[RMDB]
RNA sequence: GGGAACGACUCGAGUAGAGUCGAAAAGUGGAGAUUAAUGAGAGCUAGUUUAUCCUCUUACCCAAAGCUAUUGUCCUGGUAAAAUGAGGAUUUAUUUGCCUUUCCUCGGGAUUGACACAGCAUGACACCAUGAGAUGAAUUUUUAUCUAGGGCAACACACGCACCUACCUUUCGAGGUAGGUGCGUGAAAAGAAACAACAACAACAAC
Reactivity to 2A3 in 0.01 (KOAc 150mM, MgCl2 10mM, bicine 150mM(pH8.5), 24C), signal-to-noise 1, nucleotides 027 to 156: g000u050g010g030a000g080a190u120u000a090a200u190g010a100g000a000g040c050u050a010g100u070u000u000a010u010c010c000u030c040u000u120a270c000c000c000a060a090a000g060c040u050a100u140u010g000u030c030c000u070g000g010u000a020a020a020a020u100g000a050g010g000a030u000u020u020a120u020u090u260g050c000c000u120u200u100c070c000u000c000g000g000g050a080u040u040g000a040c050a000c050a050g100c100a160u120g010a010c000a040c060c000a100u140g100a010g010a260u150g010a270a280u200u000u000u000u000a000u110c130u130a000g000g000g000c000a000a000c010a000
Source: RMDB library OK3TST, as collected in RNAgym.
An RNA of 207 nucleotides, treated with 2A3 and read out base by base.
The RNA was probed in 150 mM KOAc, 10 mM MgCl2 and 150 mM bicine (pH 8.5) at 24 C.
For 2A3, 304 sequencing reads were counted.